[RMDB]
RNA sequence: GGGAACGACUCGAGUAGAGUCGAAAACUUCCAGCGUUCGCGCUGGAAGAAAGGCCGAGUAGUGUUGGGUCGCGAAAGGCCAUAAAUCAACUAUCACUCAGAAAAUCGGUAUCUUCGGAUACCGAAAGUCUAUAAACAACUUCGGUUGUUUAUAGACAAAAGAAACAACAACAACAAC
Reactivity to 2A3 in 0.01 (KOAc 150mM, MgCl2 10mM, bicine 150mM(pH8.5), 24C), signal-to-noise 3, nucleotides 027 to 126: c000u010u000c000c000a010g000c010g030u070u080c150g000c000g000c100u000g000g020a000a000g010a000a030a010g000g010c010c010g010a010g000u000a000g000u010g080u140u130g130g050g040u150c030g000c000g050a030a010a000g000g000c010c000a000u010a000a010a010u060c010a000a060c020u100a060u290c040a030c100u040c020a050g130a090a090a030a120u020c010g000g000u000a010u010c000u010u060c170g140g000a010u000a000c000c010g010a000a010a000
Reactivity to DMS in 0.01 (KOAc 150mM, MgCl2 10mM, bicine 150mM(pH8.5), 24C), signal-to-noise 3, nucleotides 027 to 126: c000u000u000c000c000a010g010c000g010u000u010c230g010c010g040c000u000g010g000a000a000g000a040a070a130g000g010c020c010g000a060g020u000a050g010u000g010u010u010g010g010g010u000c050g030c000g000a130a140a230g000g000c000c020a040u000a030a040a090u000c110a070a070c100u000a050u030c150a030c040u000c030a100g010a060a070a090a120u000c010g000g000u000a000u000c000u010u000c150g000g010a020u010a000c010c010g000a010a020a050